[RMDB]
RNA sequence: GGGAACGACUCGAGUAGAGUCGAAAAAGUGACUUGGAAUGAUUGGCAAACAUCUCGCCAUUUAGAUAUGGGAGCAAUAAAUUUAACAAUAACCGGCUAUAAUAGAUCCAUCACAAUUAUAGGAGAACUAUGCCAUGAUGUUCGCAUCAUGGCAUAGAAAAGAAACAACAACAACAAC
Reactivity to 2A3 in 0.01 (KOAc 150mM, MgCl2 10mM, bicine 150mM(pH8.5), 24C), signal-to-noise 1, nucleotides 027 to 126: a000g020u020g050a000c100u120u120g040g070a010a000u060g080a060u110u140g030g000c030a000a080a080c060a090u080c010u020c030g210c010c000a040u000u030u030a100g020a080u140a070u130g000g000g000a070g010c050a010a020u120a150a070a060u120u090u060a190a080c030a030a070u070a090a000c000c000g070g000c000u000a030u060a290a050u010a080g070a030u030c010c000a060u060c050a000c000a020a010u180u170a090u180a060g090g030a080g010a050a050
Reactivity to DMS in 0.01 (KOAc 150mM, MgCl2 10mM, bicine 150mM(pH8.5), 24C), signal-to-noise 1, nucleotides 027 to 126: a130g010u000g020a050c070u010u010g000g040a060a040u000g000a080u000u010g010g030c160a120a090a160c150a040u000c070u000c010g010c090c010a050u000u000u000a080g010a080u000a040u000g000g000g000a040g010c230a060a040u030a000a110a080u010u010u010a070a090c070a070a000u020a010a170c090c070g000g000c010u000a010u000a010a060u000a150g000a070u010c050c020a050u010c020a040c000a070a060u000u000a030u000a070g000g000a130g030a110a110